[RMDB]
RNA sequence: GGGAACGACUCGAGUAGAGUCGAAAAAUACAAGGGGAGGUUUCGGCCAAAUGUUGUAUGCAGAAAGCGUGAGGAAGGUAGCACUUAGUCACUCACGAGUAGCGGUUCGGCAGUAGUGCUAAAAUGAGACAGUACGAAAAGUUCGCUUUUCGUACAAUCAGAUUAGGAUGUUCGCAUCCUAAUCUGAAAAAGAAACAACAACAACAAC
Reactivity to 2A3 in 0.01 (KOAc 150mM, MgCl2 10mM, bicine 150mM(pH8.5), 24C), signal-to-noise 4, nucleotides 027 to 156: a000u170a030c070a060a080g020g010g000g010a030g060g020u040u040u090c070g040g000c010c000a000a070a060u100g010u050u040g030u050a110u070g000c060a040g060a140a040a020g080c030g020u030g000a020g000g030a120a020g050g030u050a010g030c020a000c040u050u050a030g040u090c020a020c090u050c010a030c050g030a010g040u080a010g030c060g010g020u070u060c030g050g010c030a040g040u110a010g010u000g040c010u040a030a030a040a080u130g000a050g030a080c060a060g000u000a000c000g000a000a000a000a020g020u020u090c140g040c070u020u000u000u000c000g000u000a010c020a000a030
Reactivity to DMS in 0.01 (KOAc 150mM, MgCl2 10mM, bicine 150mM(pH8.5), 24C), signal-to-noise 2, nucleotides 027 to 156: a100u000a090c040a110a080g010g010g020g020a130g020g010u000u000u000c050g060g020c000c040a050a040a140u010g000u000u000g040u000a110u000g010c000a080g020a060a110a070g000c020g000u010g010a060g010g030a140a110g030g010u000a040g000c050a050c040u000u000a130g010u000c030a090c020u010c000a100c040g010a120g030u000a070g060c010g010g050u010u000c020g040g010c020a080g020u000a030g000u010g000c000u000a020a060a070a130u010g000a140g010a090c040a110g010u010a020c000g020a020a020a020a030g010u000u000c300g030c010u000u000u000u010c010g000u010a010c010a020a110
Chemical mapping of a 207-nucleotide RNA with 2A3 and DMS.
For 2A3, 2,525 sequencing reads were counted.